An RNA of 207 nucleotides, treated with 2A3 and read out base by base. 2A3 is a SHAPE reagent: it acylates the 2'-hydroxyl of flexible nucleotides of all four kinds. The RNA was probed in 150 mM KOAc, 10 mM MgCl2 and 150 mM bicine (pH 8.5) at 24 C.
RNA sequence: GGGAACGACUCGAGUAGAGUCGAAAACCGUCUCUUGUGCUCCUAUCGCUGAAGGGGAGUUUCAUCCAGCACAGCAAGAGCAACCCGUGAUGGAGGCGACUGGGAUUACACUUGUCCUCGUAUAAGGGAUUUAUCCCUUCGUUGUGGGCGUGAAUCUACGUAGACAUAAGUUCGCUUAUGUCUACGUAAAAGAAACAACAACAACAAC
Reactivity to 2A3 in 0.01 (KOAc 150mM, MgCl2 10mM, bicine 150mM(pH8.5), 24C), signal-to-noise 1, nucleotides 027 to 156: c030c020g020u010c020u030c010u030u070g070u080g060c010u050c010c000u100a150u210c100g030c040u080g090a110a110g000g010g050g030a060g040u070u080u130c090a090u000c040c090a000g040c090a020c010a070g000c010a060a010g000a020g050c000a050a030c000c060c050g100u050g100a100u070g030g030a010g000g070c010g020a000c070u020g060g030g000a030u000u080a060c030a010c000u030u140g000u000c020c020u010c060g150u250a040u040a170a010g040g020g000a000u020u180u070a240u160c000c000c000u000u010c060g000u090u150g000u020g000g000g030c030g020u000g010a020a070u000c020u010